[RMDB]
RNA sequence: GGGAACGACUCGAGUAGAGUCGAAAACGAACUGCGGUUCAGCGCGAGAUGCAGCGGUUGAUAGCUGCCGAUGCUCCGCGACAACAACCACCACCACAAGUUGGUGGAGGACACCAACAACCACCUCGUACUCGGUCCCGUUCGCGGGACCGAGUACAAAAGAAACAACAACAACAAC
Reactivity to 2A3 in 0.01 (KOAc 150mM, MgCl2 10mM, bicine 150mM(pH8.5), 24C), signal-to-noise 1, nucleotides 027 to 126: c000g000a000a000c000u180g010c140g010g010u090u040c000a000g040c000g020c000g000a170g020a080u140g000c000a000g050c020g000g030u060u070g120a200u140a080g130c050u020g030c000c000g040a000u000g000c000u000c000c000g000c030g000a000c000a260a090c020a020a080c010c010a000c000c030a010c000c000a020c000a090a090g040u100u000g050g000u010g000g000a070g000g010a000c020a220c110c000a070a000c000a080a010c000c000a050c000c000u030c060